[RMDB]
RNA sequence: GGGAACGACUCGAGUAGAGUCGAAAAACAUGCCGGGCUCCUACACGUGCGUCUGCUCUGACGGCUUCCGCCUGAGCCCAGAGCUCGGCUGCAUAGACGUGGACGAGUGCGCGGAGCCCGGGCUCAGACUCUCUGUACCUUUCGAGGUACAGAGAGUAAAAGAAACAACAACAACAAC
Reactivity to DMS in 0.01 (KOAc 150mM, MgCl2 10mM, bicine 150mM(pH8.5), 24C), signal-to-noise 2, nucleotides 027 to 126: a100c140a140u010g000c010c010g000g000g010c010u010c010c010u000a120c040a050c030g020u010g020c010g010u010c000u000g020c030u000c050u000g020a120c130g020g000c020u000u010c180c170g030c060c010u020g020a020g020c010c020c160a110g010a120g010c000u000c040g010g000c010u000g000c100a090u000a030g010a040c150g010u000g000g010a040c020g010a160g020u000g010c030g020c140g000g000a030g020c000c000c000g010g000g010c050u000c080a100g000
Reactivity to 2A3 in 0.01 (KOAc 150mM, MgCl2 10mM, bicine 150mM(pH8.5), 24C), signal-to-noise 2, nucleotides 027 to 126: a030c080a020u240g060c000c000g020g000g020c000u010c000c000u000a010c030a010c030g150u210g100c020g040u020c010u040g020c040u010c010u070g100a040c070g070g010c000u150u020c050c050g050c050c040u100g000a000g020c010c000c020a050g020a010g010c010u010c010g050g000c040u040g000c000a050u080a100g040a050c080g020u020g040g000a010c000g010a010g060u040g020c150g000c080g000g000a000g000c010c000c000g000g000g000c010u000c010a040g040